[RMDB]
RNA sequence: GGGAACGACUCGAGUAGAGUCGAAAACUGAGGUCCUCAAAACUGAGGGGCAUUUUCUGUGGUUUGAAAGGAAAGUGCACCCAGUUUUGGGGAUGUCAAAAAACGUGCAUCGGUUCGCCGAUGCACGGUCUCUACAAAUCUUCGGAUUUGUAGAGACAAAAGAAACAACAACAACAAC
Reactivity to 2A3 in 0.01 (KOAc 150mM, MgCl2 10mM, bicine 150mM(pH8.5), 24C), signal-to-noise 2, nucleotides 027 to 126: c030u020g010a020g020g050u000c000c000u000c000a000a010a000a000c020u010g010a220g070g000g000g000c000a000u010u010u000u000c020u040g160u140g200g200u220u250u300g240a250a150a040g010g000a010a010a000g010u010g000c000a020c000c010c000a000g000u000u010u010u000g000g000g000g000a000u010g030u010c000a000a040a040a000a000a140c010g000u000g000c000a000u000c000g020g020u040u050c160g040c080c000g010a000u000g000c000a000c000g000
Reactivity to DMS in 0.01 (KOAc 150mM, MgCl2 10mM, bicine 150mM(pH8.5), 24C), signal-to-noise 2, nucleotides 027 to 126: c070u010g020a030g000g010u000c000c010u010c000a000a000a000a010c010u000g000a130g020g000g000g010c000a000u000u010u000u000c000u000g000u020g030g010u020u010u010g020a110a160a260g000g000a010a020a010g020u000g000c010a040c000c000c000a020g010u000u000u000u010g020g000g000g020a010u000g000u010c000a000a030a080a030a080a270c000g010u000g010c000a000u000c000g000g010u010u030c230g030c020c010g000a010u000g000c010a000c000g000